[RMDB]
RNA sequence: GGGAACGACUCGAGUAGAGUCGAAAAAUACACCAGCAGUAGGACUCAGCGACCGUCACAACAAGGUUGUACUGGUAUCCGACGGUCGUAUAGCCCUGUCUUGCAGGUUGCCUUGCACUGACGUGCCACACCAUUUACAGAUUCGUCUGUAAAUGAAGUAAAGUACCGAGUUCGCUCGGUACUUUACAAAAGAAACAACAACAACAAC
Reactivity to 2A3 in 0.01 (KOAc 150mM, MgCl2 10mM, bicine 150mM(pH8.5), 24C), signal-to-noise 2, nucleotides 027 to 156: a000u130a050c080a020c010c000a000g000c000a000g000u060a020g030g000a020c020u010c100a020g000c020g000a000c000c010g000u000c000a020c020a130a190c040a090a160g100g030u070u030g100u150a090c050u050g070g040u120a150u080c080c080g020a000c000g010g000u010c030g000u020a020u050a060g020c010c000c000u020g040u070c030u030u140g000c010a020g030g000u040u060g080c000c000u040u100g010c010a010c000u130g080a060c180g040u010g000c020c020a090c010a010c030c020a000u000u000u000a000c000a000g010a030u020u140c150g110u040c090u000g020u010a000a000a000u020g010a030a010
Reactivity to DMS in 0.01 (KOAc 150mM, MgCl2 10mM, bicine 150mM(pH8.5), 24C), signal-to-noise 1, nucleotides 027 to 156: a120u030a020c070a150c050c010a040g080c050a040g000u000a020g020g010a050c040u010c080a240g020c000g050a040c000c000g030u010c020a200c080a240a090c020a060a040g020g020u000u010g040u000a120c050u010g010g000u000a140u000c140c020g030a050c040g000g090u000c040g050u010a020u000a040g050c010c040c000u000g030u010c030u000u000g000c000a030g010g000u000u000g030c010c160u000u010g000c010a080c050u010g020a120c220g000u010g010c040c000a170c060a120c090c010a040u010u030u000a020c010a030g000a070u000u010c270g010u000c000u010g000u000a000a010a010u000g000a090a180
An RNA of 207 nucleotides, treated with 2A3 and DMS and read out base by base. DMS adducts were read by reverse transcription with MarathonRT. 2A3 adducts were read by reverse transcription with SuperScript II with manganese. The data come from the RNA Mapping Database (RMDB), library M2RFPK. The RNA was probed in 150 mM KOAc, 10 mM MgCl2 and 150 mM bicine (pH 8.5) at 24 C.